RNA sequence: GGGAACGACUCGAGUAGAGUCGAAAACGGGUGAUGCUUGACUGAGCCUUGGUCGGGCCUUGAUUGAGCGUACGUGCAUUCGCCCGGGCGACGACAGACCUGAGUGCAUUUGCCGGGCAGGCACCCCCUAAAGGGAUCGAUUCGUCGAUCCCUUUAGAAAAGAAACAACAACAACAAC
Reactivity to 2A3 in 0.01 (KOAc 150mM, MgCl2 10mM, bicine 150mM(pH8.5), 24C), signal-to-noise 2, nucleotides 027 to 126: c020g000g050g020u080g030a150u120g020c000u080u050g040a020c020u020g000a010g060c000c000u070u030g090g080u140c060g000g010g020c020c020u120u150g080a210u100u100g040a060g060c060g010u050a030c040g030u070g010c020a090u130u120c030g000c020c010c020g000g050g000c040g020a110c010g000a020c010a050g090a050c020c050u070g040a010g070u110g000c020a080u050u020u060g030c010c020g020g030g000c040a020g030g000c010a010c000c000c000c000
Reactivity to DMS in 0.01 (KOAc 150mM, MgCl2 10mM, bicine 150mM(pH8.5), 24C), signal-to-noise 4, nucleotides 027 to 126: c070g000g000g010u010g010a080u000g010c010u000u010g010a050c040u010g000a100g010c030c050u000u000g030g010u000c140g000g000g000c040c020u010u010g000a100u000u000g000a050g010c010g000u000a060c140g010u000g020c020a130u000u010c120g000c020c020c010g000g000g010c040g000a050c080g000a090c090a090g000a070c060c040u000g010a100g010u000g000c060a110u010u010u000g000c010c000g000g010g010c050a070g000g010c030a080c020c010c020c040
Structure probing data (2A3 and DMS) for a 177-nucleotide construct.
2A3 is a SHAPE reagent: it acylates the 2'-hydroxyl of flexible nucleotides of all four kinds.
Values cover nucleotides 27 to 126.